About this RNA:
Chemical mapping of a 207-nucleotide RNA with DMS and 2A3. For DMS the reverse transcriptase was MarathonRT. Values are in units of 0.01, from 0 to 300, in steps of 10. For DMS, 3,450 sequencing reads were counted. It was measured as part of the RMDB library OK3TST. 2A3 adducts were read by reverse transcription with SuperScript II with manganese.
RNA sequence: GGGAACGACUCGAGUAGAGUCGAAAAGUAUGUUACGAUGAUUCCGCCUCGAAUCAUCUAUGAAGAGACUAGUCUUCAUAGUAACAUAGGUAUGUCAGUGAUGACUGACUAGUCUCAGUCAUGUAGUAUCGAGGCGGAUACUACCACUGACAAGGUGCGAAUCUAGCUAGUUCGCUAGCUAGAUUCGAAAAGAAACAACAACAACAAC
Reactivity to DMS in 0.01 (KOAc 150mM, MgCl2 10mM, bicine 150mM(pH8.5), 24C), signal-to-noise 2, nucleotides 027 to 156: g020u000a030u010g000u000u010a000c070g030a050u000g030a100u000u000c000c030g030c050c050u000c020g010a060a090u000c070a070u000c070u010a040u000g000a130a080g030a050g010a170c190u020a100g020u000c010u000u000c010a040u000a120g030u000a010a030c020a050u010a090g010g030u000a080u000g020u000c010a040g030u000g000a300u010g000a080c060u000g040a030c010u000a160g010u000c030u000c010a110g030u000c030a130u010g020u000a030g000u010a090u000c010g010a060g000g040c060g020g000a010u000a000c040u000a040c050c010a070c000u000g020a010c010a050a180g000g000u050g000
Reactivity to 2A3 in 0.01 (KOAc 150mM, MgCl2 10mM, bicine 150mM(pH8.5), 24C), signal-to-noise 4, nucleotides 027 to 156: g120u070a020u100g020u010u020a040c050g020a080u020g010a030u070u000c000c000g030c000c010u030c020g030a060a090u040c070a040u050c070u040a130u140g070a060a050g030a010g040a090c070u070a060g040u000c010u000u010c010a010u010a020g050u020a020a000c010a010u040a030g120g120u250a090u140g010u000c010a010g010u030g030a040u040g020a040c080u020g010a010c010u010a020g060u020c010u000c050a020g020u020c020a030u140g110u190a040g020u010a070u060c000g010a010g000g000c000g000g000a000u000a000c000u010a000c000c020a000c000u010g000a010c030a030a010g090g010u170g060